[RMDB]
RNA sequence: GGGAACGACUCGAGUAGAGUCGAAAAGAGCGAUUAGACAAAGGGGUAGAGCUACAUGUUAGAUAGCUGUAUAAUCGUUCAAGUUACAUCAAAACAUCUUCAAUAUUUAUUACUUACUUUCCUUUCUGCCAGAGUACGGUAUUCGUACCGUACUCAACCCCUUGGAUGAAUUCGUUCAUCCAAGGGGAAAAGAAACAACAACAACAAC
Reactivity to 2A3 in 0.01 (KOAc 150mM, MgCl2 10mM, bicine 150mM(pH8.5), 24C), signal-to-noise 4, nucleotides 027 to 156: g010a000g010c010g000a010u010u010a050g010a060c080a070a130a030g060g030g000g000u040a060g020a030g040c000u030a010c020a050u230g080u240u040a040g000a270u010a000g000c000u010g020u060a020u020a010a010u000c010g010u000u010c020a030a020g050u070u120a090c050a060u120c070a080a110a090a070c010a130u040c080u250u080c100a130a110u100a200u160u180u110a140u170u100a080c060u090u020a020c000u040u090u060c000c010u040u060u070c040u030g020c030c030a040g000a000g000u010a000c010g000g000u000a030u010u010c050g020u000a010c010c000g000u000a000c000u000c000a000a000